This 177-nucleotide RNA was probed chemically with 2A3 and DMS. As a SHAPE reagent, 2A3 marks flexible, mostly unpaired nucleotides at the ribose 2'-OH. It was measured as part of the RMDB library RFMREP.
RNA sequence: GGGAACGACUCGAGUAGAGUCGAAAAAGGGCUGUUCGACUCCACGCGGAAAUGUCGAAGGAUGAUGUCCACCACGCCGUGCUGUCACGUUCUCGGUACCCUCGAUUUCCGUCUCUUCUUGCAUGCGCAGUACGAAGGUGUUCGCACCUUCGUACUGAAAAGAAACAACAACAACAAC
Reactivity to 2A3 in 0.01 (KOAc 150mM, MgCl2 10mM, bicine 150mM(pH8.5), 24C), signal-to-noise 2, nucleotides 027 to 126: a000g080g010g010c060u060g020u030u020c010g000a030c000u000c010c010a040c040g090c070g030g040a090a120a070u170g020u030c000g000a010a020g090g010a020u120g000a030u110g050u080c040c000a000c030c020a050c060g000c010c000g030u030g000c040u040g020u060c030a000c080g040u010u040c010u020c010g000g040u070a060c010c000c050u000c020g060a090u000u010u080c020c030g040u000c040u000c010u060u040c030u040u080g040c030a080u100g080c100g000
Reactivity to DMS in 0.01 (KOAc 150mM, MgCl2 10mM, bicine 150mM(pH8.5), 24C), signal-to-noise 2, nucleotides 027 to 126: a070g010g000g020c020u010g030u010u000c020g000a030c020u000c030c040a070c190g010c100g000g010a090a060a130u020g030u020c020g010a140a060g000g010a090u020g010a130u000g000u000c010c020a110c100c040a100c170g000c070c080g000u010g000c060u010g010u000c090a100c030g020u000u000c010u000c040g000g040u010a080c060c030c030u000c040g010a110u000u000u000c040c020g000u000c030u000c050u000u000c020u020u000g010c090a050u000g020c120g000